[RMDB]
Chemical mapping of a 177-nucleotide RNA with DMS. Conditions: 150 mM KOAc, 10 mM MgCl2 and 150 mM bicine (pH 8.5), 24 C. Values cover nucleotides 27 to 126.
RNA sequence: GGGAACGACUCGAGUAGAGUCGAAAAAAGUGUGAAAAAGAUCAUUCUUAGGCCCAACAAUAACUCCCCCUCUUCCACAGCAGCCUGGGCCUGAGUGGAGGAUCCGGAAGACAAUGGAUACUUACUAAAAUCAGUGACCAUUCGUGGUCACUGAUUUAAAAGAAACAACAACAACAAC
Reactivity to DMS in 0.01 (KOAc 150mM, MgCl2 10mM, bicine 150mM(pH8.5), 24C), signal-to-noise 1, nucleotides 027 to 126: a060a040g040u030g000u000g000a030a040a150a180a100g000a130u000c030a070u000u000c010u000u000a030g030g000c000c000c000a070a060c150a040a050u040a060a210c150u000c010c000c000c050c070u010c040u020u000c000c010a070c060a080g040c120a050g010c050c110u000g000g000g000c020c000u020g000a070g000u010g020g020a050g000g000a010u000c030c010g040g030a060a070g000a070c160a070a100u000g000g000a160u000a050c110u000u000a090c130u000a110